[RMDB]
Structure probing data (DMS) for a 177-nucleotide construct. Conditions: 150 mM KOAc, 10 mM MgCl2 and 150 mM bicine (pH 8.5), 24 C. The data come from the RNA Mapping Database (RMDB), library TTRINS. Reactivities are rounded to 0.1 and cut off at 0 and 3.
RNA sequence: GGGAACGACUCGAGUAGAGUCGAAAAGAUAUGGAUACGUUGAAGAAUCAAGCACAUCCGGGAGAUGGCGGUCGGAAACGACCGGCCAUCGAAGAACGGAUGUGCUUGAUUUGGAGUAUCCUAAGUCCGUAGGUGCAUAGUUCGCUAUGCACCUACGAAAAGAAACAACAACAACAAC
Reactivity to DMS in 0.01 (KOAc 150mM, MgCl2 10mM, bicine 150mM(pH8.5), 24C), signal-to-noise 1, nucleotides 027 to 126: g010a070u000a300u000g010g020a020u010a000c010g020u020u010g010a290a150g000a000a040u010c030a060a010g000c000a010c000a000u000c010c000g020g000g010a100g030a020u010g000g020c000g000g000u000c020g020g000a100a100a250c010g000a010c010c000g060g030c000c010a000u010c020g020a050a160g010a140a300c010g000g000a000u000g010u000g010c000u000u010g000a010u000u000u000g010g000a080g020u000a010u000c010c010u000a010a130g010u030c050